[RMDB]
Source: RMDB library RFM130, as collected in RNAgym.
This 207-nucleotide RNA was probed chemically with DMS and 2A3.
Reactivities are rounded to 0.1 and cut off at 0 and 3.
For 2A3 the reverse transcriptase was SuperScript II with manganese.
RNA sequence: GGGAACGACUCGAGUAGAGUCGAAAACAUAAUGAUGCGGUAAUUUGCGGUUGAUCCGUUCACUGUGAAGCUCCCGCCAGAGCUUCAAAUAGCAGUUUUCGGCUGUGAUAUUCAAUUUCUUACAUAUUCUGAACAAAUCUGAUGCUUCGGCAUCAGAGUCAUCUAACAAGUUCGCUUGUUAGAUGACAAAAGAAACAACAACAACAAC
Reactivity to DMS in 0.01 (KOAc 150mM, MgCl2 10mM, bicine 150mM(pH8.5), 24C), signal-to-noise 1, nucleotides 027 to 156: c050a100u010a170a080u010g050a100u000g010c030g000g030u010a060a130u010u010u010g010c030g040g030u010u040g020a120u010c000c030g010u010u000c010a100c050u000g010u000g000a060a060g020c000u000c010c090c110g020c240c140a140g000a030g060c000u000u010c030a050a040a080u000a120g000c000a030g050u000u000u000u020c080g030g020c000u000g020u010g000a100u000a080u000u000c050a040a190u000u000u020c030u030u000a190c060a110u010a080u010u010c010u000g020a040a150c090a130a120a250u000c010u010g000a010u000g010c030u000u010c300g000g000c020a030u000c000a000g000a030
Reactivity to 2A3 in 0.01 (KOAc 150mM, MgCl2 10mM, bicine 150mM(pH8.5), 24C), signal-to-noise 7, nucleotides 027 to 156: c030a020u220a130a090u220g040a040u120g020c030g020g040u070a100a120u040u080u110g040c030g040g000u060u110g040a060u090c000c020g020u060u070c040a020c040u070g020u030g060a010a000g000c010u010c040c030c010g040c020c020a010g000a000g000c000u010u010c010a040a050a040u120a020g010c020a020g010u010u020u040u130c040g030g000c020u030g030u030g070a030u030a110u140u080c040a050a100u060u090u070c060u090u110a060c030a070u150a110u180u110c070u100g050a130a020c020a060a100a100u030c000u000g000a000u000g000c010u040u060c170g110g000c000a000u000c000a000g000a000